[RMDB]
RNA sequence: GGGAACGACUCGAGUAGAGUCGAAAAUCCGACGAGCUGAACGCUUUCGAAGGAAAGCUUGACCAGCUAAUCUUCUGCAACGCCAUUACGAGGACUGCCCUUAGAGGCUCAUGGCGAUAGGUCAGCCAAAACUAUUUGAGGUUCGCCUCAAAUAGAACGCUAAUUUCAAGUUCGCUUGAAAUUAGCGAAAAGAAACAACAACAACAAC
Reactivity to 2A3 in 0.01 (KOAc 150mM, MgCl2 10mM, bicine 150mM(pH8.5), 24C), signal-to-noise 5, nucleotides 027 to 156: u030c020c010g040a090c070g030a030g010c020u020g030a110a020c060g020c020u050u100u110c060g040a070a050g110g030a100a040a000g000c000u070u090g070a060c030c010a010g000c000u020a080a110u040c050u080u020c030u110g030c020a080a060c010g020c020c010a040u090u110a080c140g040a060g090g110a070c120u120g020c010c010c000u090u170a140g040a180g120g010c010u010c020a030u040g000g000c000g040a070u060a050g080g000u030c010a010g000c000c010a010a070a040a050c000u000a000u010u000u000g000a000g000g040u040u110c160g090c050c000u000c000a000a000a000u000a000g000a010a010
Reactivity to DMS in 0.01 (KOAc 150mM, MgCl2 10mM, bicine 150mM(pH8.5), 24C), signal-to-noise 2, nucleotides 027 to 156: u000c010c010g040a180c020g000a110g040c020u000g000a080a080c140g020c020u000u010u000c050g010a280a130g000g030a050a030a030g020c000u000u000g020a130c100c040a100g000c000u010a020a080u000c010u000u000c100u010g010c030a170a150c020g050c010c000a050u000u000a090c060g010a170g050g020a130c070u010g010c010c020c000u000u000a110g020a130g020g010c000u010c060a060u010g010g040c010g010a120u000a020g000g010u000c010a050g000c010c030a060a120a120a180c000u000a010u000u000u000g000a040g030g000u000u000c300g030c000c000u020c000a000a010a010u000a020g000a070a140